The record gives the reactivity of an RNA of 207 nucleotides to 2A3 and DMS.
RNA sequence: GGGAACGACUCGAGUAGAGUCGAAAAAAGAGCUUCGGCUCUUUCCGGGAUAUGGAUCUCUAGCGUGCGCUUGGAUUUAUAGCCGACGUAGUCGGAAACGACUAUCAACGCUAUUGUCAGCGUCGGGUCCUAAGUCAUCAUGAGCCUUCGGGCUCAAUUUCAAUCAAAUAUUCGUAUUUGAUUGAAAAAAAGAAACAACAACAACAAC
Reactivity to 2A3 in 0.01 (KOAc 150mM, MgCl2 10mM, bicine 150mM(pH8.5), 24C), signal-to-noise 3, nucleotides 027 to 156: a000a020g030a010g000c010u080u100c290g160g010c000u000c000u020u010u020c010c000g070g070g020a040u100a030u120g010g010a020u020c090u030c170u300a080g120c120g110u200g040c040g030c030u100u170g140g020a050u060u300u040a030u080a010g030c030c010g020a060c060g020u000a000g010u000c010g020g000a110a080a060c000g000a000c000u010a010u130c050a050a000c000g000c010u000a000u040u030g020u020c010a010g000c000g010u030c040g010g000g000u010c000c000u020a130a050g030u000c000a060u030c020a080u170g020a000g000c000c040u050u100c300g040g000g000c000u000c010a000a000
Reactivity to DMS in 0.01 (KOAc 150mM, MgCl2 10mM, bicine 150mM(pH8.5), 24C), signal-to-noise 1, nucleotides 027 to 156: a040a040g000a070g010c080u010u000c300g040g000c000u020c010u000u000u000c060c000g010g000g000a110u000a100u020g020g000a010u000c000u000c030u010a180g050c110g000u000g080c070g020c030u030u000g050g010a060u010u000u010a020u010a020g050c030c010g000a300c280g010u000a000g010u000c020g030g020a130a090a220c010g000a060c000u000a030u000c010a050a250c070g010c010u010a040u000u000g010u000c010a070g030c050g010u000c070g000g000g010u010c010c000u000a040a150g000u000c040a120u010c080a140u000g010a040g000c000c000u010u000c300g080g050g040c000u010c000a000a020
It was measured as part of the RMDB library RNAMAK. For 2A3 the reverse transcriptase was SuperScript II with manganese. High DMS reactivity at an A or C suggests that its Watson-Crick edge is free.